[RMDB]
RNA sequence: GGGAACGACUCGAGUAGAGUCGAAAACGGACCGCUAAGGUUGCCGGCCGCAGACGACAGCAGCGAGGUCCGCUCGGCAUCGGUGAGCACUUUGGGCGCCUCGGGCGGCUCACCGUUGUGCACGCGGAAGGCGCCGUAAAUUCGUUUACGGCGCCUUAAAAGAAACAACAACAACAAC
Reactivity to 2A3 in 0.01 (KOAc 150mM, MgCl2 10mM, bicine 150mM(pH8.5), 24C), signal-to-noise 3, nucleotides 027 to 126: c030g010g030a050c000c000g000c130u110a110a090g080g020u070u110g090c010c000g030g000c010c020g030c040a040g010a050c050g010a010c010a030g090c010a010g010c020g050a020g000g150u020c010c000g000c020u020c040g080g030c000a020u020c010g000g000u020g000a010g020c010a020c100u170u220u220g130g050g030c050g030c010c040u160c090g050g030g030c040g030g000c000u000c010a000c000c010g000u010u030g010u030g070c040a050c110g000c000g000g000
Reactivity to DMS in 0.01 (KOAc 150mM, MgCl2 10mM, bicine 150mM(pH8.5), 24C), signal-to-noise 2, nucleotides 027 to 126: c050g000g000a110c030c010g000c070u020a090a100g010g020u010u010g000c090c020g000g000c060c030g000c070a030g000a110c060g030a080c070a100g040c010a070g000c010g000a120g040g030u000c000c000g040c010u030c130g010g020c020a040u000c040g000g000u000g000a040g000c000a070c070u030u020u050g010g020g020c080g010c020c000u040c100g050g000g020c030g050g000c010u010c000a000c000c010g030u010u000g020u010g000c050a060c050g000c010g010g000